[RMDB]
RNA sequence: GGGAACGACUCGAGUAGAGUCGAAAAACCGGAGGCCGACAAUCCAGGGAACCGGAUGUCAUCACGUUGUUGCAGUACCAGAUGGCAUCUUAAAUCCGAUCUGCAAAUAAGCAUUUAGAAAGCUGAUAAAAUCACACACACUUCGGUGUGUGUGAAAGAGAUGUUAUGUCUUCGGACAUAACAUCUCAAAAGAAACAACAACAACAAC
Reactivity to DMS in 0.01 (KOAc 150mM, MgCl2 10mM, bicine 150mM(pH8.5), 24C), signal-to-noise 1, nucleotides 027 to 156: a060c000c020g020g000a040g020g040c030c010g070a170c020a100a100u000c030c060a000g010g060g000a090a160c050c050g010g040a060u010g030u000c000a080u000c010a260c130g060u000u000g020u080u000g010c020a060g020u020a060c040c020a110g000a020u000g000g000c000a020u000c010u010u000a020a130a190u000c020c050g000a090u000c060u110g030c060a060a080a170u020a100a070g010c020a130u000u000u000a160g020a030a040a170g000c000u020g020a190u000a050a110a070a190u000c010a000c010a010c000a000c000a010c020u010u010c300g070g060u000g000u000g000u000g000u000g000a020a020a070
Reactivity to 2A3 in 0.01 (KOAc 150mM, MgCl2 10mM, bicine 150mM(pH8.5), 24C), signal-to-noise 2, nucleotides 027 to 156: a010c050c000g040g000a090g080g020c040c050g030a060c100a060a080u070c030c070a100g040g030g010a030a040c060c040g000g010a000u000g000u010c000a020u000c020a000c140g070u060u090g070u030u040g110c030a040g000u160a080c090c050a070g000a000u000g000g010c000a010u000c000u000u060a030a060a030u100c050c040g020a070u000c040u060g010c000a000a170a000u070a110a000g000c020a030u030u160u150a090g110a120a090a000g050c030u060g030a020u130a050a190a000a100u050c000a000c000a010c000a000c000a000c000u050u070c190g060g000u000g030u000g000u000g000u000g000a000a000a000